RNA sequence: GGGAACGACUCGAGUAGAGUCGAAAAGAUAUGGAAGAUACCCUUUAGCUCCUAUAUGGAGCUGCGAGUCGGAAACGACUCACAGCUAUGAAGUAUACAUGGAGCUAAAGGGUAUCUUCCUAAGUCAGAUAUACUUUCAGUUCGCUGAAAGUAUAUCAAAAGAAACAACAACAACAAC
Reactivity to DMS in 0.01 (KOAc 150mM, MgCl2 10mM, bicine 150mM(pH8.5), 24C), signal-to-noise 4, nucleotides 027 to 126: g000a060u010a300u010g000g000a010a010g000a030u010a010c000c000c000u010u000u010a000g010c000u000c000c010u000a040u000a020u000g000g000a010g030c000u010g020c040g010a020g020u000c000g000g000a150a120a280c000g010a010c000u000c000a010c010a010g010c000u000a210u000g010a140a270g000u000a010u000a050c300a180u010g010g000a000g010c010u000a000a010a000g000g000g010u000a000u000c000u000u000c000c000u000a020a040g010u000c060a120
This 177-nucleotide RNA was probed chemically with DMS. The reactions ran in a buffer of 150 mM KOAc, 10 mM MgCl2 and 150 mM bicine (pH 8.5), at 24 C. DMS adducts were read by reverse transcription with MarathonRT.